Conditions: 150 mM KOAc, 10 mM MgCl2 and 150 mM bicine (pH 8.5), 24 C.
This 207-nucleotide RNA was probed chemically with 2A3 and DMS.
It was measured as part of the RMDB library OK3TST.
RNA sequence: GGGAACGACUCGAGUAGAGUCGAAAAAAUCUUAACCAAAAUAAUUGCUUAACAAAGUAAAAGGCAGAGUCCUGGAAAGAAAGUGUCCAAGCAGUGAUUGGUAUCCAUGGAGGUUUUCCCUGCAGCCAUGUGCACUGCUGCUGGGGAAGCUUAGCAAGCUUCCAUAAAGGUUCGCCUUUAUGGAAGCAAAAGAAACAACAACAACAAC
Reactivity to 2A3 in 0.01 (KOAc 150mM, MgCl2 10mM, bicine 150mM(pH8.5), 24C), signal-to-noise 2, nucleotides 027 to 156: a000a000u140c040u040u030a030a020c000c000a000a000a060a080u140a030a040u100u020g010c020u090u040a080a030c020a100a140a000g050u130a030a160a090a010g070g000c080a030g080a030g220u090c020c010u020g030g070a050a100a000g110a050a040a010g100u040g030u030c050c070a010a010g050c010a030g020u010g050a070u090u090g050g020u020a010u030c110c040a060u110g110g030a050g030g000u000u010u000u040c010c000c000u000g000c000a000g000c010c070a070u200g070u070g130c070a020c120u070g010c000u000g000c020u030g000g020g000g010a000a000g010c000u010u060a030g070c030a050a040
Reactivity to DMS in 0.01 (KOAc 150mM, MgCl2 10mM, bicine 150mM(pH8.5), 24C), signal-to-noise 1, nucleotides 027 to 156: a110a100u000c060u000u000a100a200c020c010a120a020a080a140u010a070a120u000u010g000c010u000u010a140a090c050a090a070a160g010u000a030a070a020a060g040g020c010a100g000a170g000u010c030c030u010g000g000a050a030a130g010a070a050a160g000u000g010u010c060c000a060a080g070c030a050g020u010g010a080u010u020g010g050u000a050u000c060c040a120u020g000g050a080g040g000u000u000u000u000c000c010c030u000g000c020a000g010c010c060a060u000g000u000g050c110a080c020u000g000c000u000g000c060u000g010g000g000g010a010a010g030c020u000u000a040g050c060a100a200